[RMDB]
RNA sequence: GGGAACGACUCGAGUAGAGUCGAAAAAUAAAGCACAUGAAGCACAUGAAGCACGGCAAGCAGUACAAGCACUACAAGCAGUACAAGCACAUGAAGCAGAAGAAGCAGCCGAAGCACAUGAAAAAAAGAUAUUGCAAUAGUUCGCUAUUGCAAUAUCAAAAGAAACAACAACAACAAC
Reactivity to 2A3 in 0.01 (KOAc 150mM, MgCl2 10mM, bicine 150mM(pH8.5), 24C), signal-to-noise 2, nucleotides 027 to 126: a000u110a000a040a000g020c000a030c020a080u090g070a110a030g040c000a020c000a070u060g060a070a010g000c020a020c050g020g000c030a020a020g060c000a010g010u040a010c010a030a150g000c000a000c060u150a040c050a070a060g040c010a000g000u020a020c010a040a030g010c010a030c040a060u110g030a040a040g010c060a000g030a070a000g030a050a020g070c030a000g040c020c020g010a010a010g000c000a010c020a080u080g120a060a070a030a000a000a000a000
Reactivity to DMS in 0.01 (KOAc 150mM, MgCl2 10mM, bicine 150mM(pH8.5), 24C), signal-to-noise 3, nucleotides 027 to 126: a070u000a080a090a070g000c030a040c070a050u000g020a100a040g000c050a100c080a080u010g000a090a080g050c020a090c100g020g020c030a030a080g020c030a040g030u000a070c100a040a100g000c050a040c050u010a070c140a060a040g000c040a080g020u000a030c090a040a110g020c050a010c120a060u010g010a070a050g000c000a040g030a110a060g010a070a050g000c020a040g000c040c040g010a080a050g000c040a040c100a020u010g000a010a000a070a060a090a080a090